[RMDB]
RNA sequence: GGGAACGACUCGAGUAGAGUCGAAAAUAUUUCGCGCCAUUGUAGCUCAGUGCAAGAGCGCUUCACUCGUAUAAAAAUACUGCCAUGAAGAGGUCCGCGGUUCAAUCCCGCGUGGUGGCAAAAAAAACAUCGGUAAUAUAUUCGUAUAUUACCGAUGAAAAGAAACAACAACAACAAC
Reactivity to DMS in 0.01 (KOAc 150mM, MgCl2 10mM, bicine 150mM(pH8.5), 24C), signal-to-noise 5, nucleotides 027 to 126: u020a110u000u000u010c070g010c230g000c020c040a050u010u000g020u000a100g010c020u000c040a100g000u000g010c150a120a040g000a120g020c020g010c000u000u010c030a060c130u010c150g010u000a040u010a020a080a120a090a090u000a030c060u000g000c110c110a080u000g020a030a070g010a050g000g010u000c040c010g000c010g000g010u000u000c220a090a300u000c200c000c000g010c000g010u000g000g020u010g000g000c010a000a000a000a040a030a040a080a130
Reactivity to 2A3 in 0.01 (KOAc 150mM, MgCl2 10mM, bicine 150mM(pH8.5), 24C), signal-to-noise 2, nucleotides 027 to 126: u170a060u000u160u080c060g000c010g000c020c010a010u010u030g020u040a020g000c010u020c080a050g000u010g130c050a080a010g000a000g000c000g000c000u030u020c010a040c020u090c060g020u080a070u090a130a270a040a050a010u050a080c030u040g060c040c010a060u060g040a030a050g010a020g060g000u010c010c030g010c000g040g000u000u060c000a010a050u040c010c010c000g000c000g000u010g010g020u020g010g000c000a130a010a000a000a030a000a020a030